[RMDB]
RNA sequence: GGGAACGACUCGAGUAGAGUCGAAAAAGCGGGGAUUAUAAAACAAAUCUCUGAGUUGCCUAUUAGUUAUGAAGAGAAUUUAAGUCUUCACGAAAAUGAUGCCCUGCAUUUACCAGAAAGUAACAACUGUACCCUAAGUCUUCGGACUUAGGGUACAAAAAGAAACAACAACAACAAC
Reactivity to 2A3 in 0.01 (KOAc 150mM, MgCl2 10mM, bicine 150mM(pH8.5), 24C), signal-to-noise 1, nucleotides 027 to 126: a000g020c000g000g040g000g010a000u000u020a140u300a210a040a000a040c100a060a000a010u000c000u000c000u000g020a110g000u070u000g020c000c050u270a290u300u120a000g000u110u020a070u090g010a000a000g000a000g000a110a140u060u040u080a230a040g060u000c050u050u070c100a000c220g030a000a000a000a220u060g020a000u050g230c000c000c030u000g000c000a030u040u030u020a070c000c000a000g230a050a110a010g140u170a100a050c030a010a030c000
Reactivity to DMS in 0.01 (KOAc 150mM, MgCl2 10mM, bicine 150mM(pH8.5), 24C), signal-to-noise 1, nucleotides 027 to 126: a050g100c000g020g020g010g000a050u000u000a100u010a050a080a120a010c130a030a050a010u000c000u020c050u000g000a300g000u010u000g000c010c100u000a060u100u060a120g040u050u000a030u060g000a190a020g000a050g000a000a000u000u050u070a140a220g000u000c040u000u050c090a000c070g000a070a020a100a090u000g010a050u070g000c020c020c000u010g000c010a000u000u030u010a010c030c110a190g010a050a050a140g020u070a070a100c050a010a180c160
About this RNA
Source: RMDB library OK1LIB, as collected in RNAgym. This 177-nucleotide RNA was probed chemically with 2A3 and DMS. The RNA was probed in 150 mM KOAc, 10 mM MgCl2 and 150 mM bicine (pH 8.5) at 24 C. The 2A3 profile rests on 382 reads. For DMS the reverse transcriptase was MarathonRT.